RNA sequence: GGGAACGACUCGAGUAGAGUCGAAAAGGCCUCGUAAAAAGCCGCACAGUUAUAGUUGCAAACGACGAUAACUACGCUCUAGCAGCUUAGGCUAGCUAGCCAUCUUGCUCACGUUUCUCAAAUGGGCAGAGUAUUAAGAUGGUCACCUUUACAUUUGCACAUCUAUCCCGUUCGCGGGAUAGAUGUGAAAAGAAACAACAACAACAAC
Reactivity to 2A3 in 0.01 (KOAc 150mM, MgCl2 10mM, bicine 150mM(pH8.5), 24C), signal-to-noise 2, nucleotides 027 to 156: g070g000c000c050u050c070g030u040a050a090a050a090a080g020c060c040g000c030a110c100a040g010u000u040a050u020a040g020u000u050g060c130a130a180a050c080g010a000c020g010a050u010a050a040c020u060a030c060g000c030u000c010u040a010g000c000a000g010c030u060u130a140g030g090c000u040a020g010c010u010a010g000c000c000a000u000c000u010u040g000c000u000c000a140c130g010u030u120u020c090u010c010a020a100a100u090g010g000g060c070a030g010a000g020u020a110u210u120a040a040g020a000u010g000g000u060c040a100c070c100u110u170u210a080c060a110u090u030u040g050
The record gives the reactivity of an RNA of 207 nucleotides to 2A3. 2A3 adducts were read by reverse transcription with SuperScript II with manganese. Values are in units of 0.01, from 0 to 300, in steps of 10. The data come from the RNA Mapping Database (RMDB), library ARCHII. The RNA was probed in 150 mM KOAc, 10 mM MgCl2 and 150 mM bicine (pH 8.5) at 24 C.